The record gives the reactivity of an RNA of 207 nucleotides to 2A3. The RNA was probed in 150 mM KOAc, 10 mM MgCl2 and 150 mM bicine (pH 8.5) at 24 C. For 2A3, 666 sequencing reads were counted. 2A3 is a SHAPE reagent: it acylates the 2'-hydroxyl of flexible nucleotides of all four kinds.
RNA sequence: GGGAACGACUCGAGUAGAGUCGAAAACGGCAAAAAAGCAAACUUGACCACCAAGGAUAAAAGAGAUCUUAUCCAAGGAUGCAAAAGAUAAUCUCACUUUUGACACCCACUGAUCUCGAUCUUAAAGAAAACCGAGACUACUUCGGUAGUCUCGGAACCUAUCGACCGUGUUCGCACGGUCGAUAGGAAAAGAAACAACAACAACAAC
Reactivity to 2A3 in 0.01 (KOAc 150mM, MgCl2 10mM, bicine 150mM(pH8.5), 24C), signal-to-noise 1, nucleotides 027 to 156: c010g040g000c000a000a030a000a000a030a060g120c070a050a050a060c090u110u060g020a110c000c000a020c010c040a030a050g000g000a020u090a120a080a050a000g010a010g000a000u000c010u050u040a020u030c050c000a030a070g000g010a030u050g010c010a020a000a000a020g000a070u150a180a190u150c070u050c140a070c020u080u000u000u000g060a070c010a010c010c000c000a030c080u040g020a030u000c020u030c080g010a080u030c030u130u160a070a070a000g150a040a030a040a020c000c000g010a000g000a000c000u000a000c010u020u030c150g060g000u000a000g060u000c000u000c000g000g000a000a000